Structure probing data (DMS and 2A3) for a 177-nucleotide construct. DMS adducts were read by reverse transcription with MarathonRT. For 2A3 the reverse transcriptase was SuperScript II with manganese. Conditions: 150 mM KOAc, 10 mM MgCl2 and 150 mM bicine (pH 8.5), 24 C. Source: RMDB library OK1LIB, as collected in RNAgym.
[RMDB]
RNA sequence: GGGAACGACUCGAGUAGAGUCGAAAACACGUCGGCAGCGCACGCGCUCGCGCACAGCCUGGCGAUCGAAGACGCUCUCGGCAUCGAGCUGCCCCACGAGGUCCACCGGCUGCGGGCCCUGAUCGUCCACACUGGUCGUAUUCGUACGACCAGUGUGAAAAGAAACAACAACAACAAC
Reactivity to DMS in 0.01 (KOAc 150mM, MgCl2 10mM, bicine 150mM(pH8.5), 24C), signal-to-noise 2, nucleotides 027 to 126: c060a150c080g000u000c010g010g000c000a050g090c080g000c020a080c140g020c060g020c060u020c130g000c030g070c060a080c160a150g000c000c010u000g030g000c000g010a060u020c060g000a170a090g000a020c090g000c010u000c030u000c140g020g010c070a120u010c060g010a140g030c010u000g000c040c000c030c030a100c060g030a120g000g020u000c080c050a050c070c000g000g020c020u000g020c040g000g000g000c020c020c000u030g000a020u030c060g000u010c020
Reactivity to 2A3 in 0.01 (KOAc 150mM, MgCl2 10mM, bicine 150mM(pH8.5), 24C), signal-to-noise 4, nucleotides 027 to 126: c070a020c020g070u030c010g030g020c020a030g000c010g000c040a020c050g120c020g010c050u060c070g020c000g020c010a050c050a050g010c000c020u050g030g000c010g010a020u090c050g060a090a030g050a030c030g010c040u000c000u010c030g050g000c020a100u070c040g010a010g030c010u050g030c010c000c000c010a070c070g050a070g020g030u040c040c030a040c020c050g020g010c020u050g040c020g030g010g010c000c010c000u040g020a060u020c030g030u000c000